[RMDB]
Structure probing data (DMS and 2A3) for a 207-nucleotide construct. For 2A3 the reverse transcriptase was SuperScript II with manganese. Source: RMDB library OK3TST, as collected in RNAgym.

RNA sequence: GGGAACGACUCGAGUAGAGUCGAAAAAGUUUGUAUUACACCUGUUAAAUUCUCCCAGGUGAUGCCUAUUGGUGUUUACAGACGAGUAUGGUAUAGACCAUAUAUUACUAUUCUCUCUCUCAGGAGAGGAGAAUAGAUGCAUACAAAGGAGAAGCAAACCUAAAUGAGUGUUCGCACUCAUUUAGGUAAAAGAAACAACAACAACAAC
Reactivity to DMS in 0.01 (KOAc 150mM, MgCl2 10mM, bicine 150mM(pH8.5), 24C), signal-to-noise 1, nucleotides 027 to 156: a150g000u000u000u000g000u000a030u000u000a100c010a040c010c000u010g020u000u010a090a100a230u000u020c000u000c000c000c000a060g020g010u000g010a020u000g000c040c030u000a130u010u000g020g070u010g010u000u000u000a040c000a060g020a020c020g000a120g020u000a010u000g000g030u000a200u010a140g020a120c020c010a050u000a000u000a060u010u000a160c000u000a030u000u000c000u010c000u000c000u000c010u000c300a270g040g020a040g010a010g030g010a050g010a000a020u000a000g020a130u000g070c100a090u000a230c070a010a130a050g010g010a040g000a020a030g010c070a050a090
Reactivity to 2A3 in 0.01 (KOAc 150mM, MgCl2 10mM, bicine 150mM(pH8.5), 24C), signal-to-noise 3, nucleotides 027 to 156: a000g020u050u030u020g020u020a040u040u060a050c000a000c000c000u010g040u090u080a120a230a210u050u000c010u020c000c000c030a020g000g010u040g070a070u090g020c010c020u170a260u150u300g010g010u040g010u040u020u010a000c020a010g010a010c020g020a020g040u020a000u010g050g040u070a180u150a300g140a080c000c000a000u010a010u000a010u040u140a070c000u000a000u000u000c000u010c000u000c000u000c010u030c080a100g000g220a020g040a030g010g030a010g000a000a000u000a000g000a010u100g090c020a050u060a140c030a000a110a010g020g020a010g000a010a010g070c070a140a070
For DMS the reverse transcriptase was MarathonRT. For DMS, 2,819 sequencing reads were counted.